Structure probing data (DMS and 2A3) for a 177-nucleotide construct. For DMS, 18,930 sequencing reads were counted. For 2A3, 11,870 sequencing reads were counted. The data come from the RNA Mapping Database (RMDB), library OK1LIB.

[RMDB]
RNA sequence: GGGAACGACUCGAGUAGAGUCGAAAAGAUUUACGGGGCUAAAACUUACUACCGAAGCUACGGCAUCAGUAAUGAUGGGUAGGGGAGCUUCCCAUACGGGUUGAAGCAUGACCGUAAGGACAUGUGGCCCUAUUAUUAAUUUCGAUUAAUAAUAGGGAAAAGAAACAACAACAACAAC
Reactivity to DMS in 0.01 (KOAc 150mM, MgCl2 10mM, bicine 150mM(pH8.5), 24C), signal-to-noise 6, nucleotides 027 to 126: g000a120u030u020u010a050c040g000g000g000g000c050u020a020a050a050a090c030u010u010a090c120u010a090c090c070g010a080a120g030c030u010a050c030g010g020c030a020u010c010a030g010u050a080a070u000g000a010u000g000g010g010u020a050g010g000g000g000a080g010c090u000u000c000c010c040a110u030a060c180g000g000g000u010u000g010a110a070g000c020a060u010g010a080c000c010g010u050a070a080g000g000a110c060a020u000g010u010g000g000
Reactivity to 2A3 in 0.01 (KOAc 150mM, MgCl2 10mM, bicine 150mM(pH8.5), 24C), signal-to-noise 9, nucleotides 027 to 126: g030a010u080u070u070a040c030g020g000g030g020c050u090a020a020a080a030c030u080u100a070c020u070a060c020c040g080a090a010g070c020u050a030c030g150g000c020a020u010c010a030g080u130a190a100u080g030a020u010g010g010g060u040a040g040g020g010g010a030g030c020u050u040c000c010c000a060u130a100c090g070g000g010u010u070g040a040a000g010c020a020u060g050a080c000c010g010u030a030a070g030g020a020c020a060u090g030u080g080g000